[RMDB]
RNA sequence: GGGAACGACUCGAGUAGAGUCGAAAACGUAGAUACUUCGGUAUCUACGAAAAUAACGCAGGCGUGGGACACAGCCGGAGCUAGCCUCGGAUAGUCUCAGUAAAACAGCAUGGUUCGCCAUGCUGAAUCAGUUCUACUACUUCGGUAGUAGAACUGAAAAAGAAACAACAACAACAAC
Reactivity to 2A3 in 0.01 (KOAc 150mM, MgCl2 10mM, bicine 150mM(pH8.5), 24C), signal-to-noise 2, nucleotides 027 to 126: c020g000u000a000g000a000u010a000c000u030u050c280g040g000u000a010u000c000u010a000c000g000a000a000a010a010u090a030a040c070g000c130a030g040g000c040g070u100g020g010g050a010c010a010c050a090g000c010c000g010g000a010g000c040u090a030g020c010c000u010c020g020g020a040u050a090g020u010c000u000c020a030g070u160a010a120a050a060c010a000g010c000a000u000g010g080u030u070c200g050c050c000a000u000g010c010u000g000a000a040
Reactivity to DMS in 0.01 (KOAc 150mM, MgCl2 10mM, bicine 150mM(pH8.5), 24C), signal-to-noise 3, nucleotides 027 to 126: c020g010u000a010g000a000u000a010c010u000u000c220g030g020u000a010u000c000u000a000c010g000a030a050a070a070u000a130a110c150g020c070a190g010g000c060g010u010g020g010g000a050c040a090c120a080g010c030c000g010g020a070g000c020u000a080g010c100c010u000c040g000g000a040u010a090g000u000c000u000c020a130g010u010a040a070a090a180c010a010g010c000a010u000g010g000u000u010c210g000c000c000a000u010g010c000u010g000a040a040

Record summary: An RNA of 177 nucleotides, treated with 2A3 and DMS and read out base by base. For DMS the reverse transcriptase was MarathonRT. Conditions: 150 mM KOAc, 10 mM MgCl2 and 150 mM bicine (pH 8.5), 24 C.